[RMDB]
RNA sequence: GGGAACGACUCGAGUAGAGUCGAAAAAAGCGGUUGACAAAACGCAAAGCGUUUUGAACGUUGGCUUUGCCAACGGCUCCGAAGGAGUGAGAAAUCUGUCACAACAGAUUUCGAAUAAAAAACCAUUUACUAAGAAAGGUUUCGACCUUUCUUAGUAAAAAGAAACAACAACAACAAC
Reactivity to 2A3 in 0.01 (KOAc 150mM, MgCl2 10mM, bicine 150mM(pH8.5), 24C), signal-to-noise 5, nucleotides 027 to 126: a010a010g140c080g010g020u040u050g060a100c010a020a010a010a000c010g010c150a170a150a020g020c000g000u000u010u020u010g000a020a000c000g000u000u000g010g000c100u240u140u300g000c000c000a000a000c000g010g000c000u000c000c010g070a100a090g080g010a060g040u050g040a050g010a020a000a000u010c000u010g030u080c130a020c030a230a090c010a030g000a000u010u010u010c000g000a010a000u130a030a110a000a000a000a000c010c010a010u010u020
Reactivity to DMS in 0.01 (KOAc 150mM, MgCl2 10mM, bicine 150mM(pH8.5), 24C), signal-to-noise 3, nucleotides 027 to 126: a140a060g000c120g000g000u020u000g000a300c000a010a010a010a000c000g010c010a150a120a160g010c000g040u000u010u000u010g000a100a090c010g020u000u000g000g010c000u030u010u020g060c000c000a010a000c010g010g000c020u020c010c010g000a090a060g030g010a050g020u000g010a280g000a000a000a000u000c010u000g000u020c300a120c300a110a040c000a000g000a010u000u000u000c000g000a150a110u020a000a030a070a080a070a100c030c000a130u020u000
Background: Chemical mapping of a 177-nucleotide RNA with 2A3 and DMS. The RNA was probed in 150 mM KOAc, 10 mM MgCl2 and 150 mM bicine (pH 8.5) at 24 C. Source: RMDB libraries RFM100 and RFMREP, as collected in RNAgym. 2A3 adducts were read by reverse transcription with SuperScript II with manganese.